[RMDB]
Structure probing data (2A3 and DMS) for a 207-nucleotide construct.
The data come from the RNA Mapping Database (RMDB), library RNAMAK.
For 2A3, 2,410 sequencing reads were counted.
For 2A3 the reverse transcriptase was SuperScript II with manganese.
For DMS the reverse transcriptase was MarathonRT.
Conditions: 150 mM KOAc, 10 mM MgCl2 and 150 mM bicine (pH 8.5), 24 C.
RNA sequence: GGGAACGACUCGAGUAGAGUCGAAAAAGGCACUUCGGUGCCUGUUGAUUCCUAAGUCGAGAGGGACAACAUGGUUGAGCUCGUCGGAAACGACGAGCAAUGAUGCCAUGCUAAUCCUACCCACCUCGAUAUGGAUUGAUGCUCUCUUCGGAGAGAAAAUUGAUAGUCACUUCGGUGACUAUCAAUUAAAAGAAACAACAACAACAAC
Reactivity to 2A3 in 0.01 (KOAc 150mM, MgCl2 10mM, bicine 150mM(pH8.5), 24C), signal-to-noise 1, nucleotides 027 to 156: a030g010g000c030a020c030u100u140c300g100g000u000g020c000c010u010g000u010u070g000a110u140u060c000c000u020a140a050g030u000c010g000a000g010a020g030g000g000a050c010a060a010c010a050u000g000g000u010u010g010a000g000c000u000c010g000u000c010g020g000a090a080a080c020g000a010c000g000a000g000c000a010a030u040g010a000u040g000c000c010a000u000g000c000u040a070a100u020c020c020u010a140c050c040c030a080c010c010u000c010g000a010u010a040u080g030g020a050u090u180g060a070u230g070c000u000c000u000c000u010u110c300g040g000a020g000a000g000a140a020
Reactivity to DMS in 0.01 (KOAc 150mM, MgCl2 10mM, bicine 150mM(pH8.5), 24C), signal-to-noise 5, nucleotides 027 to 156: a020g020g000c000a010c010u000u010c300g080g020u010g010c000c000u000g000u010u000g000a220u000u000c000c020u010a110a300g010u000c010g000a030g030a300g030g010g010a070c010a030a030c000a010u000g000g020u000u000g000a020g030c000u000c000g020u010c000g000g000a190a140a300c020g000a020c000g020a010g030c010a010a000u010g010a050u000g000c000c000a010u000g010c000u000a200a140u000c020c030u000a080c020c000c060a300c130c010u000c020g020a050u000a290u000g000g000a170u000u000g000a120u000g010c030u000c000u000c010u010u010c300g040g000a040g000a020g010a030a020